[RMDB]
RNA sequence: GGGAACGACUCGAGUAGAGUCGAAAAUGGAAUGGGAAUUGUGAGAUGUGAGAUCUUGUCUUGAUUCUGCCAGAGCUUCAUAGAUGGGUCACUGAUGAUCUCUCUCUGUCUCAGUUUUCUCAUGUGAAUGAAGGGACUACAAUACAUGAUCUCUGGGGUCUCGUCCUGGAUUCGUCCAGGACGAGACAAAAGAAACAACAACAACAAC
Reactivity to 2A3 in 0.01 (KOAc 150mM, MgCl2 10mM, bicine 150mM(pH8.5), 24C), signal-to-noise 2, nucleotides 027 to 156: u130g050g020a070a060u060g020g020g000a050a070u090u070g010u080g080a030g020a070u080g030u050g030a000g000a000u000c020u020u040g010u020c010u060u070g040a060u170u060c020u030g050c020c000a040g000a050g070c120u070u070c050a030u090a070g080a070u070g020g020g000u000c030a020c120u050g050a040u130g000a030u090c040u040c020u000c030u000c070u110g030u000c000u010c000a060g030u020u020u120u080c020u000c030a030u090g050u070g100a070a090u030g060a050a050g010g000g040a000c010u080a060c140a030a060u090a070c070a030u000g060a090u030c000u000c020u030g080g000g070
Overview: This 207-nucleotide RNA was probed chemically with 2A3. 2A3 adducts were read by reverse transcription with SuperScript II with manganese. The RNA was probed in 150 mM KOAc, 10 mM MgCl2 and 150 mM bicine (pH 8.5) at 24 C. It was measured as part of the RMDB library OK3TST.